An RNA of 177 nucleotides, treated with 2A3 and read out base by base. It was measured as part of the RMDB library OK1LIB.
RNA sequence: GGGAACGACUCGAGUAGAGUCGAAAAGUUGGCGGGUGUGCUGGGUCUCACGGCGACGGUCCUGCUUCACAUGCAGCACGUGUUAGCCGCCAACGGCACGUGCGCGGCGGGAAACAAUACGAACAACAUUACCGUGCCACUUCGGUGGCACGGUAAUAAAAGAAACAACAACAACAAC
Reactivity to 2A3 in 0.01 (KOAc 150mM, MgCl2 10mM, bicine 150mM(pH8.5), 24C), signal-to-noise 1, nucleotides 027 to 126: g040u000u010g010g050c000g010g080g000u300g010u110g270c080u140g000g010g150u060c020u000c000a000c080g000g120c000g000a010c120g050g000u070c010c050u080g000c140u270u080c160a180c000a090u000g050c050a000g000c000a000c000g000u000g000u020u000a000g090c000c000g070c050c000a070a000c000g000g000c000a010c000g000u000g010c000g000c050g110g000c020g000g060g000a020a000a110c070a000a160u020a060c120g190a150a000c050a000a000c120
2A3 adducts were read by reverse transcription with SuperScript II with manganese.